Chemical mapping of a 177-nucleotide RNA with DMS. The data come from the RNA Mapping Database (RMDB), library TTRINS. The DMS profile rests on 10,585 reads. Conditions: 150 mM KOAc, 10 mM MgCl2 and 150 mM bicine (pH 8.5), 24 C. For DMS the reverse transcriptase was MarathonRT. Values cover nucleotides 27 to 126.
[RMDB]
RNA sequence: GGGAACGACUCGAGUAGAGUCGAAAAGAUAUGGAUCGACACUAGCUUGAUUUCCAGGGAGCUCGACUUCGGAAACGAAGUCGUGAGCUUUGAUCUGGACUGAUCAAGCUAGUGUCGAUCCUAAGUCCAUCACUCUUUUGUUCGCAAAAGAGUGAUGAAAAGAAACAACAACAACAAC
Reactivity to DMS in 0.01 (KOAc 150mM, MgCl2 10mM, bicine 150mM(pH8.5), 24C), signal-to-noise 7, nucleotides 027 to 126: g010a100u000a300u010g000g000a010u000c000g000a010c000a010c010u000a010g010c000u000u000g000a020u000u010u000c000c000a030g000g010g010a010g030c000u000c000g000a020c000u000u000c000g030g020a150a120a240c010g010a010a010g010u000c000g010u010g020a010g010c000u010u010u020g000a050u010c010u000g010g010a050c300u000g000a010u000c000a010a000g010c000u000a000g000u000g000u000c000g000a000u000c000c000u000a000a050g000u000c040